[RMDB]
RNA sequence: GGGAACGACUCGAGUAGAGUCGAAAAAGCGCGACGCUGCACGACGCCGAAGUGGAGACGGUGGACUCGGCCACCUUCCAGGAGGCCCUGGCUUUUAGCGCGCUGGCACAUGUUUACGGGGAGGCCUACGUGGCGGUGCGGACCGCGACGACGCUGCAAACCUAAUAGGCUUCGGCCUAUUAGGUUUAAAAGAAACAACAACAACAAC
Reactivity to DMS in 0.01 (KOAc 150mM, MgCl2 10mM, bicine 150mM(pH8.5), 24C), signal-to-noise 2, nucleotides 027 to 156: a060g010c030g030c000g030a090c050g000c040u000g030c110a110c010g010a040c040g010c010c000g010a040a170g030u000g020g000a090g010a050c060g020g020u000g010g030a060c080u010c170g000g040c010c010a040c010c010u010u020c030c060a080g020g010a200g040g020c020c020c030u000g000g000c020u000u000u010u000a110g020c060g020c040g020c040u000g020g020c020a040c060a090u000g030u000u000u010a090c060g010g000g040g000a130g050g010c040c030u010a080c020g000u010g010g020c010g010g000u010g040c110g010g000a060c060c050g020c010g000a080c010g010a130c090g020c010u000g000c070
Reactivity to 2A3 in 0.01 (KOAc 150mM, MgCl2 10mM, bicine 150mM(pH8.5), 24C), signal-to-noise 1, nucleotides 027 to 156: a000g000c000g010c000g070a060c050g010c000u060g020c060a040c110g110a060c050g000c000c020g050a120a040g170u040g000g030a020g020a070c130g020g000u010g040g010a050c040u020c130g050g000c040c020a000c000c000u010u010c040c000a000g030g020a010g030g040c020c060c030u050g000g000c000u050u150u160u150a080g030c060g000c020g000c000u010g010g040c000a020c000a150u140g070u270u180u090a090c100g000g000g000g000a060g020g120c000c020u060a060c040g050u080g070g010c000g000g000u010g020c000g060g020a030c010c000g000c000g060a070c000g020a030c020g050c100u010g010c040